[RMDB]
RNA sequence: GGGAACGACUCGAGUAGAGUCGAAAAACGCGAAUUGCAUAGCAGCAGGAGCUGUAUUGCACACCUAACAUAGAGUCGGCUUGCUUGUUAGCAUUGGUGUCGUAGUAGUAGGCCCCAACAAUGGACCUGAACCCAUGGGAUUCGUCCCAUGGGUUCAAAAAGAAACAACAACAACAAC
Reactivity to 2A3 in 0.01 (KOAc 150mM, MgCl2 10mM, bicine 150mM(pH8.5), 24C), signal-to-noise 1, nucleotides 027 to 126: a000c070g010c040g010a110a160u140u100g000c030a030u010a090g000c000a010g010c010a000g000g300a090g020c020u030g050u010a130u010u100g010c010a050c020a040c010c030u060a030a050c020a110u240a020g070a010g080u000c060g040g100c050u030u100g020c000u090u100g120u130u110a030g010c050a120u000u140g080g020u020g000u060c080g030u030a080g030u010a000g010u020a060g060g050c000c000c040c000a040a040c020a010a150u160g040g000a050c020c010
Reactivity to DMS in 0.01 (KOAc 150mM, MgCl2 10mM, bicine 150mM(pH8.5), 24C), signal-to-noise 2, nucleotides 027 to 126: a060c170g000c080g000a080a120u010u010g000c010a030u020a280g010c030a010g000c010a130g000g000a190g020c010u000g020u000a060u000u000g010c060a130c100a070c100c010u000a030a030c080a080u000a100g020a050g040u010c050g000g000c060u000u000g000c040u000u000g000u010u000a030g000c090a120u030u000g040g010u000g010u000c040g010u000a110g010u000a020g000u000a080g000g020c010c030c000c040a040a060c120a100a060u000g010g000a160c090c060
Chemical mapping of a 177-nucleotide RNA with 2A3 and DMS. The RNA was probed in 150 mM KOAc, 10 mM MgCl2 and 150 mM bicine (pH 8.5) at 24 C. Reactivities are given for positions 27 through 126. The DMS profile rests on 1,173 reads.